[RMDB]
RNA sequence: GGGAACGACUCGAGUAGAGUCGAAAAUACUUAGUACGCGCGUAGUUGCAGGCAUUCCGGGUGCAGCAACUGACGCGGAAGACUUUUCCCAGAGUGUGCGCUUCAACUGGGGUGCUGAGUAGUGCACGAAUUGCACGUACGUUCGCGUACGUGCAAAAUCAUGUCCACUAUUCGUAGUGGACAUGAUAAAAGAAACAACAACAACAAC
Reactivity to DMS in 0.01 (KOAc 150mM, MgCl2 10mM, bicine 150mM(pH8.5), 24C), signal-to-noise 4, nucleotides 027 to 156: u000a060c080u010u000a100g010u000a080c020g000c000g020c030g030u000a050g030u000u000g010c010a180g010g020c020a040u000u010c020c300g000g060g120u000g000c030a300g000c010a030a010c000u000g010a010c000g000c020g000g030a110a170g000a070c090u010u000u000u000c000c000c010a300g010a150g010u000g010u000g000c040g010c020u000u000c060a060a110c060u010g020g020g050g000u000g030c020u000g000a090g030u000a030g060u000g000c030a030c000g010a070a230u000u000g000c000a020c000g000u000a010c000g020u000u000c300g020c020g020u000a010c000g010u000g020c000a000a010a060
Reactivity to 2A3 in 0.01 (KOAc 150mM, MgCl2 10mM, bicine 150mM(pH8.5), 24C), signal-to-noise 7, nucleotides 027 to 156: u130a010c040u050u030a010g020u030a030c030g010c000g000c030g110u020a010g010u000u010g010c040a130g120g000c010a030u120u130c130c200g180g050g010u000g000c010a010g000c000a010a010c010u080g100a030c000g000c000g000g000a010a010g050a010c010u050u040u030u000c010c000c010a020g020a030g040u130g000u000g010c030g000c020u040u060c050a120a130c110u110g010g040g000g040u060g030c020u050g020a030g020u090a020g010u040g010c020a010c030g030a080a120u060u020g000c000a000c000g000u000a000c000g010u010u070c190g000c000g070u000a000c000g000u000g000c000a000a000a000
Chemical mapping of a 207-nucleotide RNA with DMS and 2A3. Values are in units of 0.01, from 0 to 300, in steps of 10. DMS adducts were read by reverse transcription with MarathonRT. The reactions ran in a buffer of 150 mM KOAc, 10 mM MgCl2 and 150 mM bicine (pH 8.5), at 24 C. For 2A3 the reverse transcriptase was SuperScript II with manganese.